[RMDB]
RNA sequence: GGGAACGACUCGAGUAGAGUCGAAAAUGCAAUUAGUUCGCUAAUUGCACAUGUCUAGUCGCUAGAAAACGAUCAAAACUAGCGAGUAGACUUUAUUGAUCGGGGGCCUGGCUUUCGAGCCAGGCAAACGUGUAGGUUUCUUCGGAAACCUACACGUAAAAGAAACAACAACAACAAC
Reactivity to DMS in 0.01 (KOAc 150mM, MgCl2 10mM, bicine 150mM(pH8.5), 24C), signal-to-noise 1, nucleotides 027 to 126: u000g000c000a000a000u000u000a000g010u010u000c200g050c010u010a010a010u000u000g000c010a070c150a040u000g000u000c000u000a010g010u000c000g010c000u010a030g030a080a050a110a170c180g020a030u000c080a070a100a130a170c000u000a010g000c000g010a030g000u000a020g000a040c010u010u010u000a060u010u010g020a030u000c050g010g010g000g000g010c000c000u000g010g020c000u010u000u040c180g000a030g010c000c000a010g010g010c000a000a040